RNA sequence: GGGAACGACUCGAGUAGAGUCGAAAAGAUAUGGAGGGAGCUAACUAGCUAAGCAACAUCGGAAACGAUGUUGAACGCGCUAAUCUUAGCGAAGAACUCCUAAGUCAAACCGCCCUUCGGGGCGGAAGCUAGUAUUCUACUUCGGUAGAAUACUAGCAAAAGAAACAACAACAACAAC
Reactivity to DMS in 0.01 (KOAc 150mM, MgCl2 10mM, bicine 150mM(pH8.5), 24C), signal-to-noise 4, nucleotides 027 to 126: g020a040u010a300u000g000g000a050g000g010g010a100g010c000u000a010a020c130u000a020g010c010u010a230a170g000c000a000a010c000a000u010c000g020g000a130a090a180c000g010a010u000g000u000u000g000a040a050c130g020c240g000c010u010a020a090u000c190u000u000a010g010c010g000a060a120g030a110a170c000u000c000c000u000a070a100g010u000c020a060a130a170c010c000g020c000c000c000u000u010c160g020g000g000g000c000g000g000a000a030
Reactivity to 2A3 in 0.01 (KOAc 150mM, MgCl2 10mM, bicine 150mM(pH8.5), 24C), signal-to-noise 3, nucleotides 027 to 126: g020a000u060a040u130g020g000a010g010g020g010a020g000c000u010a010a020c010u010a010g010c000u020a070a010g040c010a010a000c000a000u000c020g000g030a060a050a050c010g000a000u000g000u020u000g000a020a040c040g050c010g000c050u020a020a050u070c030u040u020a010g010c020g170a270a090g010a030a010c000u000c000c000u010a140a020g020u000c030a040a060a080c000c020g010c010c000c030u000u050c300g040g000g000g050c000g000g000a010a000
An RNA of 177 nucleotides, treated with DMS and 2A3 and read out base by base. Values are in units of 0.01, from 0 to 300, in steps of 10. It was measured as part of the RMDB library TTRDEL. For 2A3 the reverse transcriptase was SuperScript II with manganese. Reactivities are given for positions 27 through 126. DMS adducts were read by reverse transcription with MarathonRT.